Chemical mapping of a 177-nucleotide RNA with DMS. DMS adducts were read by reverse transcription with MarathonRT. Source: RMDB library TTRINS, as collected in RNAgym.

RNA sequence: GGGAACGACUCGAGUAGAGUCGAAAAGAUAUGGAUUGCGAAUCUUUCGGUGGCCAAGCGAUAAGCUCGUGUCGGAAACGACAUAGAGCUUUUGACGCUUGGCCACCGAAAGAAACAAUCCUAAGUCCUCAAUUUACUUGUUCGCAAGUAAAUUGAGAAAAGAAACAACAACAACAAC
Reactivity to DMS in 0.01 (KOAc 150mM, MgCl2 10mM, bicine 150mM(pH8.5), 24C), signal-to-noise 1, nucleotides 027 to 126: g000a120u000a300u010g010g000a020u000u000g000c030g000a210a070u000c000u010u010u010c000g040g040u000g000g000c010c000a010a000g000c010g050a150u000a050a020g000c000u000c000g010u000g010u000c010g010g000a080a110a290c010g000a010c020a000u000a120g020a010g000c000u000u000u000u000g000a230c060g030c010u000u010g030g020c010c010a010c000c000g010a000a000a000g010a000a040a050c010a010a010u000c000c000u010a100a200g010u000c060